[RMDB]
RNA sequence: GGGAACGACUCGAGUAGAGUCGAAAAGAUAUGGAGUCUGCGAAGAACAACGUAACAUCGUGAUCGGAAACGAUCACGUGGUUGGGAGCAGGCUCCUAAGUCAAAGGGAUCGGUUCGCCGAUCCCAACAACUACAAAGACUUCGGUCUUUGUAGUUGAAAAGAAACAACAACAACAAC
Reactivity to 2A3 in 0.01 (KOAc 150mM, MgCl2 10mM, bicine 150mM(pH8.5), 24C), signal-to-noise 4, nucleotides 027 to 126: g010a010u050a030u110g000g000a010g020u020c000u020g020c040g160a300a080g060a180a040c030a030a010c050g110u130a080a030c040a300u230c050g000u000g000a000u010c010g000g030a080a030a030c010g000a010u000c030a000c000g000u000g000g020u050u080g020g000g010a040g010c010a000g000g000c000u000c000c000u010a010a000g010u010c030a030a100a070g000g020g000a000u010c010g010g070u070u130c300g070c060c000g000a000u000c000c000c000a000a000
Reactivity to DMS in 0.01 (KOAc 150mM, MgCl2 10mM, bicine 150mM(pH8.5), 24C), signal-to-noise 6, nucleotides 027 to 126: g000a020u010a300u010g000g010a010g030u000c000u000g020c000g000a140a130g000a130a170c010a010a020c020g010u000a040a090c170a020u000c000g020u000g000a010u000c000g000g000a090a080a170c010g000a000u000c000a000c000g030u010g000g010u000u000g000g000g010a160g010c000a020g010g000c010u000c000c000u000a000a070g010u000c030a060a130a150g000g010g000a010u000c000g010g000u000u020c260g010c000c000g000a010u010c000c000c000a010a030